[RMDB]
RNA sequence: GGGAACGACUCGAGUAGAGUCGAAAAGAUAUGGAGCGACAGUUGAGACGUUCGGAAACGAAUACGUCAAUGAUGCUGCGCUCCUAAGUCAAAGGUAAAGCUAAUCGUUCGCGAUUAGCUUUACCAAUCAAUGAUUAAGCUUCGGCUUAAUCAUUGAAAAAGAAACAACAACAACAAC
Reactivity to 2A3 in 0.01 (KOAc 150mM, MgCl2 10mM, bicine 150mM(pH8.5), 24C), signal-to-noise 4, nucleotides 027 to 126: g040a010u080a040u170g000g020a020g010c010g300a300c030a010g010u040u030g030a030g010a030c020g000u000u020c010g040g030a040a050a020c030g010a020a080u240a230c000g000u000c000a110a300u170g030a020u060g000c010u000g000c000g000c000u000c000c000u010a040a000g020u030c080a140a060a070g000g000u020a020a000a000g000c020u010a000a000u010c010g080u100u190c300g020c000g130a000u010u000a000g000c000u000u000u010a000c000c000a000a000
Reactivity to DMS in 0.01 (KOAc 150mM, MgCl2 10mM, bicine 150mM(pH8.5), 24C), signal-to-noise 5, nucleotides 027 to 126: g000a060u000a300u010g000g010a000g010c000g010a160c000a000g010u000u010g000a130g010a000c000g010u000u000c010g020g000a110a080a190c010g000a030a070u010a040c030g020u000c000a130a160u010g010a130u000g000c000u000g010c010g000c000u000c000c000u010a000a060g000u000c040a080a130a110g010g000u000a000a010a000g000c000u000a000a000u000c000g030u000u010c250g030c010g000a010u000u000a000g010c000u000u000u000a010c000c000a060a050